[RMDB]
RNA sequence: GGGAACGACUCGAGUAGAGUCGAAAAUAUUUAGCUGACUAUGACGUAGCAGUCACUGCCGGCCCAUUCAUGGAUAAUGCUAUUAAUGUUGGUGGUACAGGAUUACAGUAUGCCGCCAUUACUGCACACAGAGGGCGCUUCGGCGCCCUCAAAAGAAACAACAACAACAAC
Reactivity to DMS in 0.01 (KOAc 150mM, MgCl2 10mM, bicine 150mM(pH8.5), 24C), signal-to-noise 2, nucleotides 027 to 129: u030a070u000u050u040a140g010c000u000g000a170c030u000a100u030g000a080c300g000u030a050g090c130a110g000u030c040a140c030u090g030c100c030g030g250c030c120c050a140u010u030c190a000u070g000g050a090u030a050a170u000g070c000u000a040u000u000a020a020u010g010u040u040g060g070u040g110g040u000a000c060a040g050g000a150u050u000a000c180a000g030u030a090u000g000c000c000g010c030c030a000u000u020a020c090u000g050c050a030c160a000c070a130
Reactivity to 2A3 in 0.01 (KOAc 150mM, MgCl2 10mM, bicine 150mM(pH8.5), 24C), signal-to-noise 2, nucleotides 027 to 129: u090a000u050u220u040a000g070c010u000g070a010c000u000a070u070g020a000c030g000u030a000g000c110a030g010u000c070a010c070u080g070c020c000g050g000c000c010c020a010u230u230c000a040u030g000g000a000u000a060a000u060g050c030u080a000u300u050a040a000u000g060u060u130g120g030u000g000g000u100a020c000a210g030g070a070u100u080a040c000a020g050u090a060u000g030c040c000g020c000c000a000u070u050a000c000u000g000c000a000c060a000c000a020
An RNA of 170 nucleotides, treated with DMS and 2A3 and read out base by base. 2A3 adducts were read by reverse transcription with SuperScript II with manganese. The DMS profile rests on 2,945 reads. DMS adducts were read by reverse transcription with MarathonRT. The data come from the RNA Mapping Database (RMDB), library 15KLIB.